[RMDB]
RNA sequence: GGGAACGACUCGAGUAGAGUCGAAAAGAUGGAGGGUCAGGCCUCGGACCCCUCCUAUAAGAUGUAACUAUUACGAGGCCAUUAAUGGCGUUUUCGCCUAGGUGCACGGCGGCGUGCGUGCCACCGUAAGACUUAAUGAAUAACACGCCGGAUACAACGACUAUUUAUAUUUCGAUAUAAAUAGUCGAAAAGAAACAACAACAACAAC
Reactivity to DMS in 0.01 (KOAc 150mM, MgCl2 10mM, bicine 150mM(pH8.5), 24C), signal-to-noise 2, nucleotides 027 to 156: g020a120u000g000g020a030g020g020g020u000c030a030g020g010c030c000u010c000g000g020a100c030c030c020c040u020c010c030u000a090u000a050a200g000a140u000g020u000a090a260c100u010a130u020u010a080c000g010a070g010g060c000c020a140u010u000a050a080u010g030g070c010g020u000u000u000u000c020g000c000c000u020a090g000g020u000g000c070a050c060g000g040c020g040g000c000g060u000g020c010g050u000g020c030c000a020c010c010g010u010a050a130g000a080c100u000u000a100a150u020g020a200a130u000a050a090c020a000c000g010c000c000g000g010a200u000a100c050a080a200
Reactivity to 2A3 in 0.01 (KOAc 150mM, MgCl2 10mM, bicine 150mM(pH8.5), 24C), signal-to-noise 4, nucleotides 027 to 156: g160a080u090g000g010a010g000g000g010u010c040a050g020g000c000c010u000c000g000g000a020c050c050c040c020u010c020c010u070a120u060a130a060g090a040u160g100u230a100a090c070u060a070u170u060a020c020g000a000g000g000c000c000a000u040u130a060a060u090g000g000c000g050u040u030u170u300c020g010c000c000u010a040g000g010u000g000c000a000c000g030g000c010g000g000c010g000u000g000c000g000u000g000c030c030a020c000c010g040u020a040a020g030a010c010u040u130a090a040u180g100a090a040u120a160a020c000a000c000g000c010c020g010g010a040u080a060c030a090a020